Annotation
Source: RMDB library RFM100, as collected in RNAgym. Structure probing data (2A3) for a 177-nucleotide construct. The 2A3 profile rests on 618 reads. Reactivities are given for positions 27 through 126. The RNA was probed in 150 mM KOAc, 10 mM MgCl2 and 150 mM bicine (pH 8.5) at 24 C.
RNA sequence: GGGAACGACUCGAGUAGAGUCGAAAACCAUUUUGUCUCUUCUUAACAUUAAUUGGUUUGGCCGCCGACAAGUUAAGAAGCUUCAAUUCUGGCGUUACGCAUAGCUGGCUGUUAGCUCUAUUCCUUACGCAGCACAAAUGUUCGCAUUUGUGCUGCGAAAAGAAACAACAACAACAAC
Reactivity to 2A3 in 0.01 (KOAc 150mM, MgCl2 10mM, bicine 150mM(pH8.5), 24C), signal-to-noise 2, nucleotides 027 to 126: c000c000a010u030u010u000u100g110u020c000u030c000u060u000c000u030u000a000a000c000a180u030u130a160a190u080u130g000g000u030u000u060g070g030c000c030g000c060c000g050a080c010a080a020g010u010u000a020a000g020a000a000g000c000u070u040c040a040a230u070u100c060u020g020g000c010g070u100u030a140c150g000c050a070u050a060g010c020u000g090g000c020u020g060u140u070a010g000c000u020c000u080a040u020u070c000c000u020u000a050